Source: RMDB library OK3TST, as collected in RNAgym. Chemical mapping of a 207-nucleotide RNA with 2A3. The reactions ran in a buffer of 150 mM KOAc, 10 mM MgCl2 and 150 mM bicine (pH 8.5), at 24 C.

RNA sequence: GGGAACGACUCGAGUAGAGUCGAAAAUGAGUGGGAAUGAUCACGCCCAGGUCUCUGGAGAAGCUGCGUACGUAUUCCUCGACGGUGGAGAUGGUACUGUACUGGCGCUCCAGCAGAUAGUAGGACAUGGUCAACAGCACCUGGCCUUCGGUGUGCCGUUCGAUAUGGUGUUCGCACCAUAUCGAACAAAAGAAACAACAACAACAAC
Reactivity to 2A3 in 0.01 (KOAc 150mM, MgCl2 10mM, bicine 150mM(pH8.5), 24C), signal-to-noise 1, nucleotides 027 to 156: u240g000a040g120u060g000g000g070a030a070u100g000a050u000c000a000c030g010c010c000c000a000g180g000u000c000u000c000u020g000g030a020g040a300a100g030c010u030g010c120g060u000a030c000g020u040a010u100u100c000c020u020c000g140a160c140g190g000u180g130g010a020g000a000u130g000g000u060a060c090u110g040u000a000c000u000g090g000c020g000c000u000c000c000a000g000c000a000g030a000u000a020g210u050a000g030g000a050c060a140u090g020g000u090c030a050a070c020a280g030c030a010c020c020u030g000g060c000c000u060u070c010g080g050u110g030u150g040c050c100